[RMDB]
RNA sequence: GGGAACGACUCGAGUAGAGUCGAAAAGAAAGCAAAAAAGCAAUCCGGCGUUAAUCUGGAUACGCACAAAAUCAAUAUCAACUACGUAAGGGAAGUAAAGCAAUGGUAACUCUGAUUAUUGCGUUAAUUAUGUUGGUCAUAGGCUUUUACGCCGGAAACCUACAUGAGGCUUCGGCCUCAUGUAGGUAAAAGAAACAACAACAACAAC
Reactivity to DMS in 0.01 (KOAc 150mM, MgCl2 10mM, bicine 150mM(pH8.5), 24C), signal-to-noise 1, nucleotides 027 to 156: g010a080a050a040g000c050a030a070a090a040a070a120g000c030a110a160u000c000c000g070g020c070g060u010u000a100a040u000c020u040g030g040a160u000a070c050g030c010a130c070a060a090a070a130u000c030a060a080u000a200u000c050a080a130c070u010a000c020g000u010a040a120g030g010g010a130a130g000u010a060a030a080g040c030a070a040u030g040g010u000a030a100c050u000c070u000g000a130u000u000a100u000u000g000c020g010u000u000a020a100u050u000a040u000g020u010u000g000g000u000c010a110u000a070g010g100c030u000u000u000u000a020c000g050c000c000g010g010a020a020
Reactivity to 2A3 in 0.01 (KOAc 150mM, MgCl2 10mM, bicine 150mM(pH8.5), 24C), signal-to-noise 3, nucleotides 027 to 156: g030a010a010a000g050c050a040a090a060a050a000a030g050c060a060a070u010c000c000g010g020c030g030u040u100a020a030u070c050u050g050g020a070u100a100c040g010c040a020c060a050a020a000a050u030c020a000a010u030a030u080c030a040a240c030u120a030c090g150u140a050a080g070g020g050a080a000g040u100a100a140a010g090c050a060a080u070g020g030u040a100a080c040u060c050u110g040a030u050u090a050u090u190g020c020g010u010u050a080a040u130u060a080u230g060u100u100g040g020u010c040a060u030a080g020g020c010u000u010u000u070a000c010g030c000c000g000g000a070a010
Chemical mapping of a 207-nucleotide RNA with DMS and 2A3. Values cover nucleotides 27 to 156. For 2A3, 1,380 sequencing reads were counted. High DMS reactivity at an A or C suggests that its Watson-Crick edge is free.